[RMDB]
RNA sequence: GGGAACGACUCGAGUAGAGUCGAAAAGAUAUGGAACCACUGUGGAGGCGAAGAACACGAUCGGAAACGAUCGUGGGAGCCUACCAUUGGUUCCUAAGUCAAAGAACACACCUUCGGGUGUGUUCAACAACUAUAUAUCCUUCGGGAUAUAUAGUUGAAAAGAAACAACAACAACAAC
Reactivity to DMS in 0.01 (KOAc 150mM, MgCl2 10mM, bicine 150mM(pH8.5), 24C), signal-to-noise 8, nucleotides 027 to 126: g000a050u000a300u010g000g000a020a010c000c000a020c300u010g010u010g030g010a070g010g010c000g000a100a190g010a130a190c010a010c000g010a010u010c000g000g000a110a070a250c010g010a000u000c000g020u000g000g000g000a090g020c000c010u000a070c030c010a030u000u000g010g000u000u000c000c000u000a010a080g010u000c040a110a130a180g000a020a010c000a000c000a000c000c000u000u010c250g020g010g020u000g010u000g000u000u000c000a080a200
Reactivity to 2A3 in 0.01 (KOAc 150mM, MgCl2 10mM, bicine 150mM(pH8.5), 24C), signal-to-noise 7, nucleotides 027 to 126: g020a030u090a040u160g000g000a010a000c020c020a050c220u200g090u250g120g060a040g000g010c020g130a300a030g000a070a020c010a000c000g010a010u000c000g010g010a070a060a060c020g000a000u000c000g000u010g000g000g000a010g010c010c010u200a070c000c010a010u020u050g010g000u000u000c000c000u010a100a010g030u010c050a110a070a220g000a010a000c000a000c000a010c010c000u060u180c300g120g000g000u000g000u000g000u000u000c000a000a000